[RMDB]
RNA sequence: GGGAACGACUCGAGUAGAGUCGAAAAGAUAUGGAAGCGAUCCUCGGAGAUGUCGGAAACGACGGAAUUGAGUGAUCCGCUUCCUAAGUCAAAGUGUUCAGCUCUUGUUCGCAAGAGCUGAACACAACAUUGCGAAAACGUUCGCGUUUUCGCAAUGAAAAGAAACAACAACAACAAC
Reactivity to 2A3 in 0.01 (KOAc 150mM, MgCl2 10mM, bicine 150mM(pH8.5), 24C), signal-to-noise 2, nucleotides 027 to 126: g010a030u090a020u140g000g010a010a000g020c000g000a000u000c010c020u020c020g060g010a060g010a020u050g000u010c000g050g000a080a050a080c040g000a000c000g000g010a030a070u060u060g010a020g010u300g000a000u030c040c070g020c000u020u000c000c010u000a050a010g020u030c050a150a000a120g010u020g000u000u000c000a000g040c000u020c010u000u050g050u120u220c300g020c150a000a000g000a010g030c000u000g010a010a000c000a000c010a010a010
Reactivity to DMS in 0.01 (KOAc 150mM, MgCl2 10mM, bicine 150mM(pH8.5), 24C), signal-to-noise 2, nucleotides 027 to 126: g000a060u000a300u000g000g010a010a010g030c010g020a070u000c010c000u000c010g030g010a070g010a300u020g010u010c000g010g000a090a080a180c010g020a030c020g000g000a190a150u000u000g000a030g010u020g000a000u000c040c040g020c010u000u000c000c010u000a000a100g020u000c040a090a100a080g000u000g020u000u000c000a010g030c000u000c010u000u000g010u010u010c210g010c000a010a010g010a010g000c000u000g000a010a000c000a000c000a030a120